[RMDB]
RNA sequence: GGGAACGACUCGAGUAGAGUCGAAAAAAGGUAGAUUUGGGUUCCCUCAAGGUGGGCGGAAUGGCUGCACAGUCAAUGAUUUCUCUCUGGUUAUAUGGUGCCCACUCUGAAUCCAACAGGAGCCGGAUCUUGCUGAUGACUUCGGUCAUCAGCAAGAAAAAGAAACAACAACAACAAC
Reactivity to 2A3 in 0.01 (KOAc 150mM, MgCl2 10mM, bicine 150mM(pH8.5), 24C), signal-to-noise 2, nucleotides 027 to 126: a000a000g280g010u190a100g030a170u140u070u130g060g000g000u010u000c000c000c000u010c080a010a010g050g000u000g000g000g030c070g060g150a130a020u110g000g000c000u060g010c210a050c100a120g080u010c000a100a100u090g120a190u160u270u000c020u000c000u010c090u050g080g070u190u020a070u030a070u300g050g020u040g060c060c020c000a000c000u070c000u000g000a000a000u020c000c040a080a040c030a150g130g050a000g050c040c000g000g000a000
Reactivity to DMS in 0.01 (KOAc 150mM, MgCl2 10mM, bicine 150mM(pH8.5), 24C), signal-to-noise 1, nucleotides 027 to 126: a050a070g000g030u040a010g020a150u000u010u020g000g000g020u000u000c000c030c000u000c000a120a070g030g060u010g000g000g000c010g000g000a110a140u010g000g010c040u000g000c230a100c270a120g030u020c030a010a130u040g000a080u010u010u000c030u000c070u070c030u000g000g000u020u010a030u010a200u020g010g030u010g000c030c000c000a030c010u050c000u000g010a020a100u010c040c040a050a110c120a000g020g010a040g020c000c000g030g040a100